[RMDB]
RNA sequence: GGGAACGACUCGAGUAGAGUCGAAAAGAUGGUUCUUCCCAAGGAGGACAGCCGUAAACCAUAGAAAGCAACCACUUGACUCUGGGUGUCCCUGGUUUGCAAGUGCCUCUUGUGUCCGCCAUCUGCAUUUCUGUCUAGAUGGUAAGGUUGAGGGAGGCCUCCUCUCUUAUUUCGAUAAGAGAGGAGGAAAAGAAACAACAACAACAAC
Reactivity to 2A3 in 0.01 (KOAc 150mM, MgCl2 10mM, bicine 150mM(pH8.5), 24C), signal-to-noise 4, nucleotides 027 to 156: g080a040u150g010g010u070u050c010u040u020c000c000c030a030a050g070g010a030g000g020a040c020a060g080c060c030g060u060a050a030a030c030c000a050u120a210g130a060a090a010g030c040a040a070c010c020a040c040u040u090g050a080c040u040c060u090g050g000g000u060g070u160c090c020c000u010g020g010u040u060u060g050c030a070a030g040u030g100c000c000u000c010u020u060g050u030g030u010c010c020g000c000c000a010u010c000u000g000c010a040u110u230u200c090u120g070u030c030u100a010g010a010u010g020g000u060a120a110g040g000u040u080g050a080g010g020g010a010g000g000
Reactivity to DMS in 0.01 (KOAc 150mM, MgCl2 10mM, bicine 150mM(pH8.5), 24C), signal-to-noise 2, nucleotides 027 to 156: g010a120u000g000g030u010u000c060u000u000c000c000c020a170a170g000g000a040g000g010a080c050a120g030c020c060g010u000a030a030a070c010c020a070u010a070g010a110a080a170g000c040a040a050c020c020a020c010u010u010g000a150c090u000c030u000g000g000g020u000g030u000c050c030c020u000g030g000u000u000u000g010c030a060a060g040u000g020c020c010u000c020u010u000g020u000g000u000c020c030g000c000c000a000u000c000u010g000c040a100u000u000u000c100u020g020u000c030u010a040g010a040u010g010g020u000a040a090g020g010u000u000g010a160g000g000g000a050g000g020
An RNA of 207 nucleotides, treated with 2A3 and DMS and read out base by base. For 2A3, 2,854 sequencing reads were counted. For DMS the reverse transcriptase was MarathonRT. The RNA was probed in 150 mM KOAc, 10 mM MgCl2 and 150 mM bicine (pH 8.5) at 24 C.